[RMDB]
RNA sequence: GGGAACGACUCGAGUAGAGUCGAAAAAAAAAAAGAUAUGGAUCCUUCUCUAGCGUGAGCGAAGAACGAUAAGUAUUCGGAAACGAAUACGAAACGGGAGCUUCGGGAGGAUCCUAAGUCAAAAAAACCUAAGUAUUAAGUUCGCUUAAUACUUAGGAAAAGAAACAACAACAACAAC
Reactivity to DMS in 0.01 (KOAc 150mM, MgCl2 10mM, bicine 150mM(pH8.5), 24C), signal-to-noise 2, nucleotides 027 to 126: a000a000a010a160a070a200a080g020a040u000a300u010g000g000a010u000c010c000u000u000c000u000c100u000a040g040c050g010u000g000a100g040c090g020a070a090g000a130a050c020g010a020u000a070a210g010u000a000u000u000c000g010g000a110a090a120c010g000a010a000u000a000c000g010a030a080a110c040g020g000g030a170g000c010u010u010c180g010g020g040a000g010g000a000u000c000c000u000a000a060g020u010c010a000a000a130a070a050a060a040
Reactivity to 2A3 in 0.01 (KOAc 150mM, MgCl2 10mM, bicine 150mM(pH8.5), 24C), signal-to-noise 2, nucleotides 027 to 126: a000a030a000a000a000a060a040g030a050u050a050u110g010g000a020u000c000c020u060u040c080u020c070u170a130g060c050g150u260g150a110g040c050g160a210a070g050a180a010c010g010a000u040a150a070g010u020a030u000u000c000g000g030a060a090a040c010g000a010a010u010a000c010g010a120a100a000c000g030g040g040a070g050c000u080u130c060g040g030g000a000g020g000a000u010c000c010u010a000a000g010u010c040a000a000a000a000a300a000a000